[RMDB]
RNA sequence: GGGAACGACUCGAGUAGAGUCGAAAACAAACAAAGCCAACGAAAAUCCUACUCGGAGGAUAGCUAACAUAGCAAAAGAAAACGAGUUCAUGCAAGGAGAGCAUGAAAUAACGUUGGCACAAACAAACGCAUUCAUGAGCUUCGGCUCAUGAAUGCGAAAAGAAACAACAACAACAAC
Reactivity to 2A3 in 0.01 (KOAc 150mM, MgCl2 10mM, bicine 150mM(pH8.5), 24C), signal-to-noise 2, nucleotides 027 to 126: c040a000a040a030c030a050a200a020g040c010c000a020a000c020g130a080a050a000a150u060c000c000u020a060c000u000c000g020g070a050g050g040a050u040a070g020c010u080a060a190c120a300u260a020g000c030a010a030a000a040g070a000a000a030a000c020g020a000g030u030u040c000a000u000g000c020a160a050g220g040a060g190a060g030c010a000u000g020a000a000a070u150a050a000c010g000u000u000g000g090c000a000c000a000a010a000c000a000a070a000
An RNA of 177 nucleotides, treated with 2A3 and read out base by base. The data come from the RNA Mapping Database (RMDB), library OK1LIB. 2A3 adducts were read by reverse transcription with SuperScript II with manganese. The reactions ran in a buffer of 150 mM KOAc, 10 mM MgCl2 and 150 mM bicine (pH 8.5), at 24 C.